This 177-nucleotide RNA was probed chemically with DMS and 2A3. It was measured as part of the RMDB library OK1LIB. The RNA was probed in 150 mM KOAc, 10 mM MgCl2 and 150 mM bicine (pH 8.5) at 24 C. 2A3 adducts were read by reverse transcription with SuperScript II with manganese. Values cover nucleotides 27 to 126. For DMS the reverse transcriptase was MarathonRT. For DMS, 62,636 sequencing reads were counted.
[RMDB]
RNA sequence: GGGAACGACUCGAGUAGAGUCGAAAAGCUAGCCAGCGCACGAUGAGACUGCCGUGACGUGUAGCCUGCGUCUCAACUAGUCUCCAUCAAUCAAAACGCUGGGAUUGAUGUACGAGACUAGUACACAGAGAAUGCACUUGUUCGCAGGUGUAUUCUCAAAAGAAACAACAACAACAAC
Reactivity to DMS in 0.01 (KOAc 150mM, MgCl2 10mM, bicine 150mM(pH8.5), 24C), signal-to-noise 9, nucleotides 027 to 126: g010c030u010a090g010c030c030a170g000c020g010c040a050c050g000a080u010g010a090g010a050c050u020g000c050c050g020u010g010a070c050g010u010g010u020a150g010c030c030u010g000c030g000u000c010u000c050a100a040c010u000a010g000u000c000u000c000c010a010u000c000a000a010u000c010a060a090a090a120c140g010c090u020g000g010g000a010u000u000g000a020u000g000u030a100c170g000a020g020a020c010u000a000g000u000a070c180a080c210a120
Reactivity to 2A3 in 0.01 (KOAc 150mM, MgCl2 10mM, bicine 150mM(pH8.5), 24C), signal-to-noise 9, nucleotides 027 to 126: g030c030u050a010g020c010c020a020g010c010g000c010a020c030g040a050u100g020a020g040a070c040u070g040c030c010g030u030g040a090c010g020u030g030u060a010g010c010c010u020g000c010g040u000c010u000c020a020a010c000u000a000g000u000c000u000c000c000a000u000c000a000a000u000c010a010a050a070a110c120g040c120u130g050g020g000a000u000u000g000a000u000g020u080a070c090g000a000g000a010c000u000a000g010u040a010c110a000c010a020